[RMDB]
RNA sequence: GGGAACGACUCGAGUAGAGUCGAAAAUCAGGUAUUCGUACCUGAAAAAAACCGUAGGAUCUCGGGUGGAGUCGGAUAAACAUUCGAAAGAGUGUGUAACGACUAUGAAGUCUCUAGCGUGGAUCCUAAACGGAAAAAAGGAACUUUCGAGUUCCAAGAAUUAAGGGCGAUUCGUCGCCCUUAAUUCAAAAGAAACAACAACAACAAC
Reactivity to 2A3 in 0.01 (KOAc 150mM, MgCl2 10mM, bicine 150mM(pH8.5), 24C), signal-to-noise 1, nucleotides 027 to 156: u020c000a010g010g000u010a040u000u170c250g000u070a060c020c020u020g060a090a000a000a000a000a000a000c010c000g010u010a020g000g010a010u010c030u030c090g080g070g010u060g090g020a000g000u000c000g000g000a000u050a010a000a000c000a000u010u010c000g040a020a000a200g000a020g020u010g000u000g000u030a040a020c020g000a000c000u000a220u130g070a010a080g070u000c020u040c080u160a070g200c050g030u160g130g000a000u000c020c010u010a130a130a000c010g000g080a040a040a020a020a040a130g000g010a000a000c040u100u170u130c300g050a090g010u000u000c040c000a000a030